[RMDB]
RNA sequence: GGGAACGACUCGAGUAGAGUCGAAAAAUCAGGGUAAAGAGAAGAAGCUCAACUGGGAAGGGCCAGUUGAGCCCGGUGGGUGACGUGUUACCAUUCUUUGCCGCCUUGUAGGUUAGGCCAAUUGCAAGUGGUAUCAUAAUCACUGCAAGUGCGAUUGUAGCAUUGGAUUGUUCGCAAUCCAAUGCUAAAAAGAAACAACAACAACAAC
Reactivity to 2A3 in 0.01 (KOAc 150mM, MgCl2 10mM, bicine 150mM(pH8.5), 24C), signal-to-noise 1, nucleotides 027 to 156: a050u110c020a000g000g010g000u050a050a180a000g000a060g020a160a000g110a000a070g000c000u000c000a000a000c000u000g000g000g070a060a060g110g060g170c000c070a000g000u000u030g000a000g000c020c060c000g000g020u050g000g000g050u020g080a010c030g000u080g000u040u030a040c020c020a010u000u000c010u070u000u040g010c000c000g020c000c000u080u000g190u290a030g010g030u160u000a060g010g010c040c030a020a100u010u050g060c170a120a000g020u000g020g020u050a010u040c020a090u100a160a000u050c040a020c070u030g050c010a000a000g030u020g060c020g080a020u150u140g070